[RMDB]
RNA sequence: GGGAACGACUCGAGUAGAGUCGAAAAGAUAUGGACGGAUGAAGAGCAACAGCCAUGCGGUCGGAAACGACCGUAUGGACAUGCUCCAUCCGUCCUAAGUCAAAGUAGAACAGUUCGCUGUUCUACAGAGUAAUUCUACCUUCGGGUAGAAUUACUCAAAAGAAACAACAACAACAAC
Reactivity to 2A3 in 0.01 (KOAc 150mM, MgCl2 10mM, bicine 150mM(pH8.5), 24C), signal-to-noise 2, nucleotides 027 to 126: g000a000u020a000u020g000g000a000c010g000g020a020u020g110a200a300g030a050g000c130a110a290c100a300g010c000c000a000u000g000c010g000g000u010c010g020g000a070a000a010c000g010a000c000c100g020u000a010u010g000g000a000c020a030u100g000c000u000c000c000a000u020c000c000g000u000c000c000u010a000a000g000u000c020a000a060a050g010u010a000g000a010a000c010a010g020u110u180c300g010c130u020g020u010u000c010u000a010c020a020
Reactivity to DMS in 0.01 (KOAc 150mM, MgCl2 10mM, bicine 150mM(pH8.5), 24C), signal-to-noise 2, nucleotides 027 to 126: g010a010u000a040u010g000g000a000c000g000g000a010u000g000a220a190g040a010g010c020a150a120c190a140g000c000c000a000u000g010c000g010g000u000c000g000g010a000a000a010c000g020a030c010c010g010u000a000u010g000g020a030c080a080u020g000c020u000c000c000a010u000c010c000g030u010c000c000u010a000a020g000u000c010a160a160a130g010u000a010g000a010a000c000a010g000u020u010c300g010c000u000g000u000u000c000u010a000c010a080